[RMDB]
Source: RMDB libraries RFM100 and RFMREP, as collected in RNAgym.
This 177-nucleotide RNA was probed chemically with 2A3 and DMS.
The reactions ran in a buffer of 150 mM KOAc, 10 mM MgCl2 and 150 mM bicine (pH 8.5), at 24 C.
For 2A3 the reverse transcriptase was SuperScript II with manganese.

RNA sequence: GGGAACGACUCGAGUAGAGUCGAAAAAAAGCAUCUAAGCGCGAAACUCACCACAAGAUGAGAAUUCCCUUGAAGGUCGUUGUAGACUACAACGUUGAUAGGAUGCAGAUGUACAGGUAGUAAUACCUACAAUCUUUGACUUCGGUCAAAGAUUGUAAAAAGAAACAACAACAACAAC
Reactivity to 2A3 in 0.01 (KOAc 150mM, MgCl2 10mM, bicine 150mM(pH8.5), 24C), signal-to-noise 4, nucleotides 027 to 126: a000a010a030g030c020a010u030c020u090a080a040g070c040g000c020g050a050a020a030c020u010c010a020c020c010a130c060a160a040g040a180u030g000a000g010a050a080u040u030c000c000c000u020u040g050a040a020g040g030u090c020g010u010u010g010u060a040g050a270c060u030a010c090a000a000c000g020u040u120g030a040u050a020g050g010a010u100g020c000a010g050a110u070g020u060a060c030a060g030g010u010a010g010u050a080a130u010a030c000c000
Reactivity to DMS in 0.01 (KOAc 150mM, MgCl2 10mM, bicine 150mM(pH8.5), 24C), signal-to-noise 5, nucleotides 027 to 126: a080a050a120g020c000a020u000c000u010a120a090g010c090g000c090g010a060a060a130c010u000c010a040c040c060a150c300a130a090g000a100u010g000a030g000a140a120u010u000c040c000c000u020u000g010a170a110g000g000u010c010g030u020u010g000u000a030g000a140c150u010a060c020a020a030c020g000u020u010g010a100u030a060g000g010a030u000g010c000a070g020a060u010g000u010a060c200a050g010g000u000a010g000u040a120a070u000a010c000c000